[RMDB]
RNA sequence: GGGAACGACUCGAGUAGAGUCGAAAACGUAGGUGAUGGACGAAGCCCAGCAAAGCACAACGACCACCACGCACAGCGCCGCCCGCAGCGUGGCCGGCGCGGCUGGCAAGCGAGUAGGCACUUCACGAGCUCAGGCAUAGUUCGCUAUGCCUGAGCUAAAAGAAACAACAACAACAAC
Reactivity to DMS in 0.01 (KOAc 150mM, MgCl2 10mM, bicine 150mM(pH8.5), 24C), signal-to-noise 1, nucleotides 027 to 126: c080g030u030a100g020g000u030g010a020u020g000g040a000c050g000a080a030g000c000c020c000a060g010c020a100a120a090g000c040a110c100a050a100c000g000a200c240c000a110c050c000a040c020g010c060a010c120a100g050c000g000c050c010g000c140c050c000g010c200a040g000c210g060u000g020g000c150c040g050g020c010g070c050g000g020c000u000g000g010c100a060a030g050c020g000a080g000u000a050g050g020c020a010c050u000u010c080a070c100g000
Reactivity to 2A3 in 0.01 (KOAc 150mM, MgCl2 10mM, bicine 150mM(pH8.5), 24C), signal-to-noise 3, nucleotides 027 to 126: c020g010u020a050g000g070u050g030a020u100g070g020a040c080g020a050a030g000c040c010c000a020g000c050a110a080a000g130c020a010c010a040a080c080g050a040c010c010a000c000c000a040c140g000c000a040c020a170g040c010g010c020c020g000c000c080c000g040c040a090g100c020g090u130g000g070c060c080g010g040c100g030c040g030g000c000u040g000g000c010a080a020g040c020g030a010g010u060a030g050g000c030a020c100u080u050c040a030c110g010